[RMDB]
RNA sequence: GGGAACGACUCGAGUAGAGUCGAAAAACGAGUCCGUACGCGGACUCGAAGGGCCCCAGAAGACCAAGGGGCCCAAACCUACCACUCAUUAGAUGCAUGGAAAUCACUAGGUGAUACGUCACCUGGAACACGCUUUUAAGCUUCGGCUUAAAAGCAAGAUUCGUUCGAUGUUCGCAUCGAACGAAUCAAAAGAAACAACAACAACAAC
Reactivity to 2A3 in 0.01 (KOAc 150mM, MgCl2 10mM, bicine 150mM(pH8.5), 24C), signal-to-noise 1, nucleotides 027 to 156: a000c010g000a000g000u020c000c000g000u040a030c210g010c000g040g000a000c000u000c010g020a000a000g040g000g000c010c000c000c000a090g120a270a080g040a090c070c040a090a060g030g000g000g000c000c000c010a000a000a000c000c000u030a040c010c010a030c000u060c040a110u040u160a070g040a040u090g080c080a010u090g030g150a080a080a110u260c150a100c090u010a020g040g000u000g000a030u030a000c140g040u020c000a000c000c000u020g000g020a060a020c050a000c100g000c000u000u010u000u000a010a010g000c020u000u070c130g030g000c010u020u000a000a000a000a030g000c000a000a010